This 177-nucleotide RNA was probed chemically with DMS and 2A3.
The 2A3 profile rests on 1,464 reads.
The DMS profile rests on 2,319 reads.
As a SHAPE reagent, 2A3 marks flexible, mostly unpaired nucleotides at the ribose 2'-OH.
DMS adducts were read by reverse transcription with MarathonRT.
The RNA was probed in 150 mM KOAc, 10 mM MgCl2 and 150 mM bicine (pH 8.5) at 24 C.

RNA sequence: GGGAACGACUCGAGUAGAGUCGAAAAUGUUCAGCAGGUAAUGUUUUUGGUCUUUACAAGAGUGCUGCUACAGGUUCGGCUGAUGUUGAAGUUUUCAACAUUUUAGCAACAUCUGAUUGGACUGAUGCCUAGACGUGGUAUUCGUACCACGUCUAGGAAAAGAAACAACAACAACAAC
Reactivity to DMS in 0.01 (KOAc 150mM, MgCl2 10mM, bicine 150mM(pH8.5), 24C), signal-to-noise 1, nucleotides 027 to 126: u000g010u000u000c050a210g000c120a120g020g000u000a040a030u000g010u000u000u000u000u000g010g010u000c010u000u010u010a040c060a060a210g000a060g000u010g000c040u010g000c040u010a090c070a120g000g010u000u020c160g020g030c010u000g010a020u020g000u000u000g030a030a120g020u000u010u000u000c060a040a010c030a050u000u020u010u010a190g010c020a060a030c020a020u010c020u000g020a120u000u000g010g020a080c050u000g000a120u010g010
Reactivity to 2A3 in 0.01 (KOAc 150mM, MgCl2 10mM, bicine 150mM(pH8.5), 24C), signal-to-noise 2, nucleotides 027 to 126: u050g010u000u030c010a080g000c060a100g110g140u190a030a040u030g040u000u050u080u070u020g040g050u040c000u010u100u040a010c010a050a000g000a010g030u050g020c020u050g020c010u050a050c010a020g050g000u030u060c040g070g000c020u010g000a010u000g020u000u000g040a170a150g080u060u020u190u210c040a060a010c040a030u080u070u020u230a020g000c000a000a030c000a050u000c010u010g040a300u000u050g030g000a020c030u050g040a080u190g120